Structure probing data (2A3 and DMS) for a 177-nucleotide construct. The RNA was probed in 150 mM KOAc, 10 mM MgCl2 and 150 mM bicine (pH 8.5) at 24 C. Reactivities are given for positions 27 through 126. 2A3 adducts were read by reverse transcription with SuperScript II with manganese. In probing experiments dimethyl sulfate is read out at A N1 and C N3, which are open when not base-paired.

RNA sequence: GGGAACGACUCGAGUAGAGUCGAAAAGAAAUUAUUUCAACUGUACACUUAUAGCCUACGUACUGUGACGUAUUCACUUAGAUUCUAUACUAACGUGGAUUACAAAUCGACGUUCAAGUGAAAGAAAGGCUUUACUAUUCUUCGGAAUAGUAAAGCCAAAAGAAACAACAACAACAAC
Reactivity to 2A3 in 0.01 (KOAc 150mM, MgCl2 10mM, bicine 150mM(pH8.5), 24C), signal-to-noise 3, nucleotides 027 to 126: g060a000a090a010u240u120a130u060u040u060c050a070a080c070u050g040u120a040c010a000c020u070u070a070u130a100g050c000c000u000a000c000g010u030a130c030u130g010u010g090a000c030g040u030a030u000u000c000a010c000u000u000a010g020a070u150u000c070u190a170u110a180c010u020a000a000c060g000u000g050g020a020u090u050a140c000a090a110a060u040c040g040a000c000g020u040u000c050a080a090g000u010g070a100a060a070g110a070a090a000
Reactivity to DMS in 0.01 (KOAc 150mM, MgCl2 10mM, bicine 150mM(pH8.5), 24C), signal-to-noise 2, nucleotides 027 to 126: g000a100a040a030u050u000a040u020u000u040c080a090a110c150u000g000u020a120c010a040c080u000u020a030u000a050g010c090c070u000a030c040g040u000a060c090u000g030u000g010a300c180g000u010a040u020u030c000a020c000u030u000a030g000a170u000u020c190u000a160u020a090c050u000a020a000c070g000u000g000g000a010u000u050a090c160a020a070a090u010c000g000a040c030g050u000u000c140a030a010g040u030g000a050a000a090g020a070a070a090